[RMDB]
RNA sequence: GGGAACGACUCGAGUAGAGUCGAAAAUCUGAGUGCCUGAACUUGCCUUUUCAUUUUACUUCAUCCUCCAAGGAGUUCAAUCACUUGGCGUGACUUCACUACUUUUAAGCAAAAGAGUGGUGCCCAGCCGCCGGUGUAUUUUCGAAUACACCGGCGGAAAAGAAACAACAACAACAAC
Reactivity to 2A3 in 0.01 (KOAc 150mM, MgCl2 10mM, bicine 150mM(pH8.5), 24C), signal-to-noise 2, nucleotides 027 to 126: u040c000u000g000a030g060u050g000c000c000u000g000a000a050c000u020u220g060c000c080u120u090u070u070c110a080u050u020u010u160a230c010u070u120c000a140u050c030c020u070c030c010a010a010g040g010a000g020u000u000c000a030a000u000c000a000c030u030u040g000g000c000g040u060g070a090c000u020u000c100a010c010u090a060c000u010u040u000u040a120a190g260c110a070a100a000a000g060a000g020u020g030g000u020g020c000c000c050a040g020